[RMDB]
Structure probing data (2A3 and DMS) for a 177-nucleotide construct. For 2A3, 4,234 sequencing reads were counted. It was measured as part of the RMDB library M2PK90. For DMS the reverse transcriptase was MarathonRT. Conditions: 150 mM KOAc, 10 mM MgCl2 and 150 mM bicine (pH 8.5), 24 C. Reactivities are given for positions 27 through 126.

RNA sequence: GGGAACGACUCGAGUAGAGUCGAAAAUUAAAAGGGAACGACUCGAGUAGAGUCGAAAAGACGCUCAACUCAUGGAGCGCAAGACGAAUAGCUACAUAUACGACAUGAGGGCGCCGUUCGCAAAAAACCUUAUUAUCGUGUUCGCACGAUAAUAAGGAAAAGAAACAACAACAACAAC
Reactivity to 2A3 in 0.01 (KOAc 150mM, MgCl2 10mM, bicine 150mM(pH8.5), 24C), signal-to-noise 2, nucleotides 027 to 126: u060u090a230a020a000a020g010g000g000a010a000c000g000a000c000u000c000g000a000g000u020a000g000a000g000u000c000g010a000a000a000a000g040a020c000g000c010u040c010a020a060c050u010c080a060u120g060g010a020g030c030g000c030a000a020g090a020c040g050a070a070u060a100g070c050u020a020c030a070u190a040u050a150c120g050a010c020a040u050g040a040g030g020g000c030g000c030c020g040u000u040c090g010c110a030a030a020a010a040a030
Reactivity to DMS in 0.01 (KOAc 150mM, MgCl2 10mM, bicine 150mM(pH8.5), 24C), signal-to-noise 1, nucleotides 027 to 126: u000u000a000a090a090a140g000g020g010a050a080c000g000a020c000u000c000g010a040g020u020a040g000a020g010u000c000g000a010a030a090a040g000a090c010g010c000u000c040a090a110c040u010c140a080u000g020g010a010g020c010g000c080a070a060g000a100c110g010a110a050u000a060g000c060u000a100c050a080u000a060u040a050c040g030a090c080a000u020g000a050g000g000g000c100g030c030c020g000u000u000c040g000c040a000a090a000a040a030a070